[RMDB]
RNA sequence: GGGAACGACUCGAGUAGAGUCGAAAAGUACCCUUGUUCGCAAGGGUACAAAGACACACUUCACUGUCAUAAAGAAGGUAACAUCUCAGUUACAAUAAGAGAAAAGCACCUACUUCGGUAGGUGCAACUCCCCAAAUACGUUCGCGUAUUUGGGGAGAAAAGAAACAACAACAACAAC
Reactivity to DMS in 0.01 (KOAc 150mM, MgCl2 10mM, bicine 150mM(pH8.5), 24C), signal-to-noise 1, nucleotides 027 to 126: g030u000a020c020c000c000u000u000g000u000u020c290g060c000a010a010g010g010g000u000a000c000a000a080a070g000a040c070a050c100a120c050u050u010c110a160c100u010g010u020c050a120u010a080a020a100g030a130a080g010g050u000a010a040c000a060u020c020u020c040a130g000u000u020a030c020a080a040u050a020a140g000a100g010a060a040a160a050g060c000a000c000c000u000a000c000u000u020c140g000g010u000a000g000g010u000g000c000a000a020
Reactivity to 2A3 in 0.01 (KOAc 150mM, MgCl2 10mM, bicine 150mM(pH8.5), 24C), signal-to-noise 2, nucleotides 027 to 126: g000u000a000c000c000c000u000u000g070u030u070c180g010c090a000a000g000g000g000u000a000c000a000a000a000g020a000c000a010c000a000c050u120u100c030a010c090u030g010u050c020a100u280a160a210a010g140a050a020g130g020u070a040a000c020a110u040c060u000c090a060g010u060u080a020c040a040a180u280a210a030g130a030g070a040a070a030a040g030c000a000c000c000u000a000c010u010u030c140g030g000u000a000g000g000u010g000c000a000a000
Annotation: Chemical mapping of a 177-nucleotide RNA with DMS and 2A3. 2A3 adducts were read by reverse transcription with SuperScript II with manganese.